The record gives the reactivity of an RNA of 177 nucleotides to DMS and 2A3.
Conditions: 150 mM KOAc, 10 mM MgCl2 and 150 mM bicine (pH 8.5), 24 C.
High 2A3 reactivity points to a flexible backbone, as in loops and unpaired stretches.
For DMS the reverse transcriptase was MarathonRT.
For 2A3 the reverse transcriptase was SuperScript II with manganese.
Reactivities are given for positions 27 through 126.
RNA sequence: GGGAACGACUCGAGUAGAGUCGAAAAUGGGAGGCUAUUCAAUAUCAUUGUUCUGUCCGGAAGACAGCUUAUACUGAUAUCUAUGGUAAUUUAAAGUAAGGCUGAUUAUAUAACACGAUUUUUGUGACGCUGAAUUUAGAUUCGUCUAAAUUCAGCGAAAAGAAACAACAACAACAAC
Reactivity to DMS in 0.01 (KOAc 150mM, MgCl2 10mM, bicine 150mM(pH8.5), 24C), signal-to-noise 3, nucleotides 027 to 126: u020g000g000g000a060g000g010c060u010a060u010u020c110a080a070u000a020u020c040a060u000u000g000u010u000c020u010g000u000c050c070g000g000a090a190g000a060c010a020g000c130u010u000a090u010a010c060u000g000a050u000a020u000c060u060a110u020g010g030u010a050a070u020u060u000a090a080a070g000u020a030a050g000g020c020u000g000a080u020u010a050u020a060u000a040a130c070a050c060g000a130u000u000u020u000u000g010u010g010a230
Reactivity to 2A3 in 0.01 (KOAc 150mM, MgCl2 10mM, bicine 150mM(pH8.5), 24C), signal-to-noise 5, nucleotides 027 to 126: u070g030g010g020a020g010g000c040u060a050u090u160c030a050a030u020a040u120c040a050u010u090g040u090u040c010u010g030u030c010c030g070g020a030a020g050a020c000a010g010c020u030u070a100u030a150c030u010g050a020u040a050u150c090u080a140u190g090g020u060a100a150u050u120u110a090a110a020g020u020a020a010g010g000c010u010g020a060u120u040a070u010a030u020a110a040c030a010c060g090a070u030u010u020u060u180g060u040g020a000